[RMDB]
RNA sequence: GGGAACGACUCGAGUAGAGUCGAAAAGAUAUGGAUCCGUGUUUGGGAGAAUUAUGUCGGAAACGACAUAAAUUCAUCGAUCAAACCGGAUCCUAAGUCAAAAGUUAUCCUGUUCGCAGGAUAACAACCUAAUUCAAAAGUUCGCUUUUGAAUUAGGAAAAGAAACAACAACAACAAC
Reactivity to DMS in 0.01 (KOAc 150mM, MgCl2 10mM, bicine 150mM(pH8.5), 24C), signal-to-noise 4, nucleotides 027 to 126: g000a010u000a080u010g000g000a010u000c000c000g010u010g010u000u000u000g020g010g010a210g000a030a010u000u000a010u000g000u000c010g000g000a030a010a050c000g010a000c000a000u000a010a050a080u000u000c010a190u010c290g010a160u010c010a010a010a010c000c010g010g000a010u000c000c000u000a000a040g000u000c000a110a080a100a160g010u000u000a000u000c000c000u000g010u000u010c230g030c010a010g000g000a020u000a000a000c000a080a160
Reactivity to 2A3 in 0.01 (KOAc 150mM, MgCl2 10mM, bicine 150mM(pH8.5), 24C), signal-to-noise 5, nucleotides 027 to 126: g000a000u010a010u060g000g010a000u000c000c000g090u090g080u240u000u010g160g050g050a300g010a080a000u010u000a000u010g000u000c000g010g010a020a010a010c000g000a000c010a000u010a010a090a000u010u000c020a060u260c170g300a270u110c000a020a000a000c010c000g000g000a000u000c000c000u000a000a000g000u000c010a010a020a080a130g010u000u000a010u000c000c000u010g050u030u060c300g020c080a000g000g000a000u000a010a000c000a000a000
Chemical mapping of a 177-nucleotide RNA with DMS and 2A3.
Values cover nucleotides 27 to 126.
For 2A3 the reverse transcriptase was SuperScript II with manganese.
The reactions ran in a buffer of 150 mM KOAc, 10 mM MgCl2 and 150 mM bicine (pH 8.5), at 24 C.
For DMS the reverse transcriptase was MarathonRT.